RNA sequence: GGGAACGACUCGAGUAGAGUCGAAAAGAGUGUGGAGAGGAAACAAAAGCUAGUCUCAGUUGGCAGUGUUCUACACACGGAAAGACUCAUGGGACGGUUAUCUCGACGAUUUGGCUAUCGAUUUGGCCACUCUGGCGCUUUUCGAAGCGCCAGAGUGAAAAGAAACAACAACAACAAC
Reactivity to 2A3 in 0.01 (KOAc 150mM, MgCl2 10mM, bicine 150mM(pH8.5), 24C), signal-to-noise 2, nucleotides 027 to 126: g030a000g060u120g020u100g030g020a050g000a000g030g090a100a030a050c070a020a170a000a000g070c030u090a120g020u030c020u000c080a080g000u040u070g020g000c080a030g040u010g050u040u000c160u210a020c000a000c020a000c090g050g060a120a090a030g050a010c000u000c080a070u080g020g000g060a020c000g000g010u120u050a070u020c040u000c010g050a070c080g050a080u050u030u030g030g010c050u010a060u140c000g150a090u110u000u060g040g000c020
Reactivity to DMS in 0.01 (KOAc 150mM, MgCl2 10mM, bicine 150mM(pH8.5), 24C), signal-to-noise 2, nucleotides 027 to 126: g010a040g000u020g010u000g000g000a020g010a020g000g000a140a110a070c140a060a160a060a120g000c080u030a150g000u000c000u030c020a070g010u040u010g010g000c130a100g000u000g000u040u020c110u020a080c150a010c010a070c010g010g020a110a100a000g000a040c010u000c120a040u020g000g000g000a120c020g000g010u050u030a060u010c030u000c050g000a150c070g000a170u020u030u020g010g010c000u030a100u000c160g000a200u000u020u000g000g010c050